This 207-nucleotide RNA was probed chemically with DMS and 2A3. For DMS the reverse transcriptase was MarathonRT. In probing experiments dimethyl sulfate is read out at A N1 and C N3, which are open when not base-paired. Conditions: 150 mM KOAc, 10 mM MgCl2 and 150 mM bicine (pH 8.5), 24 C. The DMS profile rests on 5,958 reads. It was measured as part of the RMDB library OK3TST. For 2A3, 6,481 sequencing reads were counted.

[RMDB]
RNA sequence: GGGAACGACUCGAGUAGAGUCGAAAAGUAAUAGAUAGCUGGAUGCAGCGUAGGCGUCAACGCAUAUCCAGCACGAAUGGUACCUGUAAAUAAAAUAUGGCGCCUAGUACAAGUACCAACAGAAGGAUAAGCGAUGGUGAUGUCAAUCACAUUUGCAGCAGUAAAUAAAUUUCGAUUUAUUUACUGCAAAAGAAACAACAACAACAAC
Reactivity to DMS in 0.01 (KOAc 150mM, MgCl2 10mM, bicine 150mM(pH8.5), 24C), signal-to-noise 3, nucleotides 027 to 156: g010u000a090a090u010a150g010a160u000a140g000c000u000g000g000a060u010g020c140a090g000c030g040u000a080g030g020c000g010u000c010a060a050c030g000c030a160u000a080u000c010c000a030g000c000a060c070g000a100a110u000g020g020u000a030c010c020u000g010u000a070a090a180u000a080a040a070a170u000a140u010g010g010c010g020c010c010u000a100g010u000a060c010a030a030g000u000a040c010c000a020a130c110a100g000a100a060g030g000a110u000a070a120g000c050g000a060u010g010g030u010g040a050u000g030u000c140a070a110u000c030a020c080a100u010u010u000g020c050a210
Reactivity to 2A3 in 0.01 (KOAc 150mM, MgCl2 10mM, bicine 150mM(pH8.5), 24C), signal-to-noise 7, nucleotides 027 to 156: g020u040a020a140u080a130g130a070u090a060g000c000u000g010g000a020u050g130c240a120g000c220g000u010a030g000g000c000g000u000c010a010a000c000g000c020a010u020a010u160c000c000a000g010c000a000c010g060a090a120u080g000g000u010a000c000c010u010g010u040a020a140a120u160a060a100a110a040u140a070u030g000g010c000g000c000c010u010a010g000u000a010c000a010a020g000u000a010c000c000a020a050c020a030g170a120a030g090g020a070u070a130a060g010c020g040a020u050g050g100u020g010a030u030g090u210c080a070a040u040c000a020c020a070u050u090u290g010c020a020